[RMDB]
RNA sequence: GGGAACGACUCGAGUAGAGUCGAAAAGGCGCACGUCGCGUUGAUCGCACCGGUGAGCAAGGGAACCGAGCUCGGCGAACUGGUGCCCGGUGGGGUCAGCGGACUGGAUCGCGAGCUGCCGGGCAGAAAUAAAAUAUGGAUUCGUCCAUAUUUUAUUAAAAGAAACAACAACAACAAC
Reactivity to DMS in 0.01 (KOAc 150mM, MgCl2 10mM, bicine 150mM(pH8.5), 24C), signal-to-noise 9, nucleotides 027 to 126: g010g010c020g020c070a140c140g010u000c030g020c010g030u000u000g000a030u000c020g000c010a040c010c010g010g000u010g010a120g000c040a110a080g000g000g000a160a060c020c010g010a260g020c250u010c040g020g010c020g000a300a180c020u000g000g020u000g000c040c000c000g000g010u000g000g000g010g000u000c010a030g010c010g000g000a040c040u000g000g010a110u010c050g010c030g010a100g000c020u000g010c030c030g000g000g010c080a090g000a060
Reactivity to 2A3 in 0.01 (KOAc 150mM, MgCl2 10mM, bicine 150mM(pH8.5), 24C), signal-to-noise 6, nucleotides 027 to 126: g070g000c000g000c020a020c050g030u030c020g010c000g110u000u020g010a000u020c030g030c180a000c010c000g000g020u160g030a090g010c010a030a030g020g000g000a020a000c020c010g040a060g240c170u170c150g010g000c000g010a040a020c010u040g080g220u090g170c010c000c000g000g000u010g000g200g000g000u000c010a000g000c000g000g010a010c010u030g030g040a090u120c030g000c010g030a020g020c020u060g020c010c030g010g030g000c040a040g070a060